The record gives the reactivity of an RNA of 177 nucleotides to 2A3 and DMS.
The DMS profile rests on 5,810 reads.
The 2A3 profile rests on 4,428 reads.
It was measured as part of the RMDB library OK1LIB.
RNA sequence: GGGAACGACUCGAGUAGAGUCGAAAAAUGCAACGUCGUACGAAUCAUUAUCACAUGCUAAAUGGUGUGACAAUCAUCGAUCCUGACAGCACUUUUAUUGGUCCAGACGUUACAAUUGGUAGUGAUACUACAUAGCUGGGUUCGCCCAGCUAUGUAGAAAAGAAACAACAACAACAAC
Reactivity to 2A3 in 0.01 (KOAc 150mM, MgCl2 10mM, bicine 150mM(pH8.5), 24C), signal-to-noise 7, nucleotides 027 to 126: a000u120g010c040a030a050c020g010u040c030g080u100a070c070g060a080a010u070c010a030u060u070a060u090c050a020c010a080u070g100c070u130a120a120a090u230g040g000u040g050u060g060a030c070a060a080u120c050a040u040c040g110a070u070c030c010u060g020a040c050a020g060c000a040c030u060u030u090u070a070u080u080g060g000u030c020c020a050g020a050c020g030u040u010a020c070a130a160u070u050g110g010u030a050g030u010g080a030u020a170
Reactivity to DMS in 0.01 (KOAc 150mM, MgCl2 10mM, bicine 150mM(pH8.5), 24C), signal-to-noise 4, nucleotides 027 to 126: a070u010g000c090a010a040c040g000u000c020g000u060a060c170g000a090a040u000c030a020u000u010a060u000c080a050c160a140u000g020c030u000a060a080a110u000g010g000u010g000u300g010a070c110a060a080u030c170a170u000c060g000a120u020c030c020u000g000a300c090a020g020c020a020c250u000u010u000u010a090u010u020g000g010u010c000c020a150g000a070c040g020u000u000a040c050a060a100u000u010g020g010u020a040g000u000g000a120u010a170